[RMDB]
RNA sequence: GGGAACGACUCGAGUAGAGUCGAAAAUCUUUGAGGUGCAGUGGCCCCUCCACACUCCCAUGGUAUCUCUGUAGCCAUGCUGGCUUGAGCAGUGGCCCCUACAGAGGGGCUGGACCCUGGACUGGGACCUUCCUACGCGAUUCGUCGCGUAGGAAGGAAAAGAAACAACAACAACAAC
Reactivity to DMS in 0.01 (KOAc 150mM, MgCl2 10mM, bicine 150mM(pH8.5), 24C), signal-to-noise 1, nucleotides 027 to 126: u010c010u010u010u010g000a070g030g100u000g010c030a120g020u020g000g010c050c040c040c090u000c010c040a090c110a120c080u000c020c010c010a140u020g010g010u000a110u000c010u000c050u000g010u010a090g000c010c000a060u010g000c130u000g000g000c140u000u030g000a080g000c050a090g030u010g000g000c080c130c060c040u000a090c190a080g000a040g020g000g020g010c030u000g000g000a090c030c010c020u000g000g000a060c070u010g000g000g010a110